[RMDB]
RNA sequence: GGGAACGACUCGAGUAGAGUCGAAAAAUGGCUACCACAUCUAAGGAAGGCAGCAGGCGCGCAAAUUACCUAUCCCUGACUCAGGGAGGUAGUAAACAGAAAUAAUGGCACAUGUUUUAAACAUGUGUUUAAUGCGUGCCUUCGGGCACGCAUUAAAAAAAGAAACAACAACAACAAC
Reactivity to 2A3 in 0.01 (KOAc 150mM, MgCl2 10mM, bicine 150mM(pH8.5), 24C), signal-to-noise 2, nucleotides 027 to 126: a000u090g010g000c000u010a010c020c000a000c000a160u080c000u080a070a000g060g000a000a120g010g000c040a000g000c010a000g090g000c000g000c010g020c040a060a020a140u090u000a000c000c000u000a110u160c040c000c000u170g170a300c040u080c250a010g010g010g000a000g060g000u010a000g000u030a000a130a080c120a030g170a000a080a010u300a010a090u070g010g000c000a000c000a000u000g050u000u200u000u080a090a170a000c000a000u000g000u000g000
Reactivity to DMS in 0.01 (KOAc 150mM, MgCl2 10mM, bicine 150mM(pH8.5), 24C), signal-to-noise 2, nucleotides 027 to 126: a060u050g000g050c070u000a120c010c010a080c030a080u010c040u000a120a080g000g000a050a010g010g000c040a050g000c070a070g020g000c030g020c000g000c080a080a100a000u010u000a010c010c000u000a160u050c010c020c020u050g000a160c130u080c020a060g030g000g010a000g000g000u020a000g000u040a040a100a100c210a030g000a070a010a030u100a100a080u010g000g020c000a000c010a020u010g010u000u010u030u120a010a060a020c000a010u020g000u000g000

The data come from the RNA Mapping Database (RMDB), library RFM100. An RNA of 177 nucleotides, treated with 2A3 and DMS and read out base by base. For 2A3 the reverse transcriptase was SuperScript II with manganese. The reactions ran in a buffer of 150 mM KOAc, 10 mM MgCl2 and 150 mM bicine (pH 8.5), at 24 C. Reactivities are given for positions 27 through 126. Reactivities are rounded to 0.1 and cut off at 0 and 3.